Chemical mapping of a 177-nucleotide RNA with DMS and 2A3.
In probing experiments dimethyl sulfate is read out at A N1 and C N3, which are open when not base-paired.
The reactions ran in a buffer of 150 mM KOAc, 10 mM MgCl2 and 150 mM bicine (pH 8.5), at 24 C.
[RMDB]
RNA sequence: GGGAACGACUCGAGUAGAGUCGAAAAUACCCCAUGAUGUAUCAAUUUAGCUAAUUGUGAGCUACUUCGCUCUCGAGAUUUUGUCUUGAAGUGUGAGUCGUAUUGAACGAACUUUGUCGAAGCUGAUAUAUCAUACGACAUUCGUGUCGUAUGAUAUAAAAGAAACAACAACAACAAC
Reactivity to DMS in 0.01 (KOAc 150mM, MgCl2 10mM, bicine 150mM(pH8.5), 24C), signal-to-noise 7, nucleotides 027 to 126: u020a140c100c000c000c130a100u030g000a070u010g020u010a060u010c030a030a040u010u010u010a030g010c020u000a080a140u040u020g030u020g010a040g000c000u000a050c050u000u000c040g010c000u000c130u020c010g010a010g000a040u000u020u010u040g000u000c020u010u010g010a040a050g010u010g010u030g000a040g010u000c090g000u000a120u000u010g010a060a040c050g020a090a100c120u010u010u000g010u000c050g000a080a110g010c050u010g000a250u000
Reactivity to 2A3 in 0.01 (KOAc 150mM, MgCl2 10mM, bicine 150mM(pH8.5), 24C), signal-to-noise 9, nucleotides 027 to 126: u120a040c020c010c000c010a080u170g030a060u100g100u120a140u130c050a070a080u030u120u090a030g010c030u070a060a130u180u110g060u060g130a020g010c000u010a020c010u020u030c010g000c010u020c000u010c050g010a010g000a010u040u190u270u300g110u050c010u000u020g010a080a040g020u020g050u080g060a010g010u020c020g020u070a110u100u160g040a040a030c030g010a050a050c060u130u110u150g080u120c070g030a050a020g050c030u020g030a010u000